[RMDB]
RNA sequence: GGGAACGACUCGAGUAGAGUCGAAAACUCUUGUGAGGCCUCUUCAUAGGUCCGGAGUCGACCUCCAUCUGAUCUGUUCGGGCCCUCUUCGCCGGGGGAGCUCCCUCCCCGUCCUUCCCUUUUCUUAGAAACGAGACGUUCGCGUCUCGUAAAAGAAACAACAACAACAAC
Reactivity to 2A3 in 0.01 (KOAc 150mM, MgCl2 10mM, bicine 150mM(pH8.5), 24C), signal-to-noise 4, nucleotides 027 to 129: c000u000c000u040u110g070u060g060a070g000g010c020c010u060c040u300u060c060a150u110a190g000g030u010c030c040g010g010a000g030u050c040g050a110c030c030u030c030c000a090u040c070u070g060a040u030c010u080g040u030u050c020g000g030g000c020c070c030u030c050u130u060c000g030c000c000g000g000g000g000g000a040g000c030u070c010c000c010u020c020c010c000c010g030u050c010c010u020u020c000c000c000u000u050u010u040c020u050u050a060g080a070a150
Reactivity to DMS in 0.01 (KOAc 150mM, MgCl2 10mM, bicine 150mM(pH8.5), 24C), signal-to-noise 2, nucleotides 027 to 129: c030u020c030u000u010g030u000g010a110g010g020c020c030u000c160u000u000c190a120u040a110g010g020u020c030c070g020g020a000g000u020c090g040a120c080c030u020c070c010a000u020c000u000g030a100u020c040u010g000u040u010c080g040g010g000c000c000c000u030c060u030u030c110g020c100c070g000g050g060g030g020a090g020c150u010c060c050c000u040c000c010c060c040g050u040c080c060u000u000c000c020c020u060u000u000u000c000u000u020a050g010a060a130